Chemical mapping of a 177-nucleotide RNA with DMS.

RNA sequence: GGGAACGACUCGAGUAGAGUCGAAAAUCUGUAACGUUCGCGUUACAGAAAAGGGUAUGAGAGUACCAGAUCAGAUCAUCCCAGAUCAGGAAAGAGAUCAAAAAAGGGCCACGUUCGCGUGGCCCAACAUAGGCAUCUACUUCGGUAGAUGCCUAUGAAAAGAAACAACAACAACAAC
Reactivity to DMS in 0.01 (KOAc 150mM, MgCl2 10mM, bicine 150mM(pH8.5), 24C), signal-to-noise 2, nucleotides 027 to 126: u000c000u010g010u000a010a010c000g020u000u000c300g010c010g020u010u010a010c010a000g000a020a010a070a160g020g000g020u000a010u010g010a240g000a300g000u020a010c010c010a130g000a030u010c030a180g000a040u000c030a060u000c000c010c010a140g010a000u000c030a110g000g020a080a070a070g020a110g000a030u010c040a000a020a060a080a130a170g000g010g020c000c000a000c010g000u000u010c140g010c020g020u010g020g000c000c010c000a010a030